[RMDB]
RNA sequence: GGGAACGACUCGAGUAGAGUCGAAAACGAAGCUCAGCAGCUCUGAAGUCCUUUGUGUAAGUCGCGCCGCCUUUUGGCGAGAGGAGCCAUACGAAAGCGGAUGGCCGGCAAAAGCUCCCAGCGCGCGCACCUCUUUCUAGUUCGCUAGAAAGAGGUGAAAAGAAACAACAACAACAAC
Reactivity to 2A3 in 0.01 (KOAc 150mM, MgCl2 10mM, bicine 150mM(pH8.5), 24C), signal-to-noise 1, nucleotides 027 to 126: c020g020a050a010g030c010u030c090a040g030c000a010g020c030u000c030u070g060a060a030g020u060c000c030u030u110u090g160u020g030u050a000a080g070u050c010g030c000g000c020c000g060c010c030u140u220u180u290g030g010c020g000a030g010a020g040g000a010g030c030c020a040u060a110c030g160a260a000a010g070c030g010g080a050u080g240g040c000c010g030g080c000a040a080a000a000g000c000u010c010c000c000a020g010c000g000c000g010c020g000
Reactivity to DMS in 0.01 (KOAc 150mM, MgCl2 10mM, bicine 150mM(pH8.5), 24C), signal-to-noise 3, nucleotides 027 to 126: c080g010a100a080g020c020u000c080a070g010c110a080g020c040u000c020u010g000a060a120g000u000c040c010u000u010u000g020u000g010u000a030a050g010u000c020g010c000g020c010c000g010c020c000u010u000u010u000g030g000c000g000a120g020a260g000g000a070g020c010c040a070u000a090c150g000a070a140a090g040c070g010g010a100u000g000g020c030c020g000g000c060a020a060a090a200g000c070u000c000c000c010a100g020c020g000c010g010c020g000